[RMDB]
RNA sequence: GGGAACGACUCGAGUAGAGUCGAAAAAAUCGAUUUGUAAGCAACCGUCUCGAAUUGUGUACUGUCGCAAUGACGAUUCUGACAAGCCAGACCAACUAUUUUCAGGGUAACUUCGGACCAGGGUGGAAGAGCCCUGUUCUUGCUUCGCCUGCAGUGCAGGAUGUUGUACGUUCGCGUACAACAUCCUAAAAGAAACAACAACAACAAC
Reactivity to 2A3 in 0.01 (KOAc 150mM, MgCl2 10mM, bicine 150mM(pH8.5), 24C), signal-to-noise 4, nucleotides 027 to 156: a000a000u130c070g020a050u070u070u120g050u100a080a060g000c030a050a040c040c030g050u010c020u070c070g100a150a130u060u070g010u010g030u110a100c060u130g110u160c060g000c050a030a060u100g060a060c040g020a010u110u000c020u040g040a040c030a070a020g030c020c010a020g060a070c010c040a040a040c060u090a150u180u050u080u130c030a020g020g000g060u050a030a090c020u090u080c040g010g020a020c020c040a010g020g050g000u090g080g030a090a040g020a010g080c000c010c020u000g000u000u010c030u030u120g030c010u040u050c030g070c050c010u060g040c070a070g030u020g080c010
Reactivity to DMS in 0.01 (KOAc 150mM, MgCl2 10mM, bicine 150mM(pH8.5), 24C), signal-to-noise 1, nucleotides 027 to 156: a080a060u020c040g030a080u010u000u000g040u010a000a080g000c050a060a060c020c010g010u000c020u000c120g010a070a070u000u000g020u000g000u000a120c170u000g020u010c030g030c010a070a170u000g020a070c000g020a070u000u010c000u000g000a060c050a040a130g000c040c000a140g010a150c030c030a090a060c060u000a140u000u000u000u000c060a070g000g040g020u010a040a040c120u000u000c060g020g000a070c060c010a030g010g020g040u000g000g000a080a130g020a290g030c010c000c000u000g030u000u000c000u000u000g010c040u000u000c000g000c010c020u000g000c040a120g020u010g000c080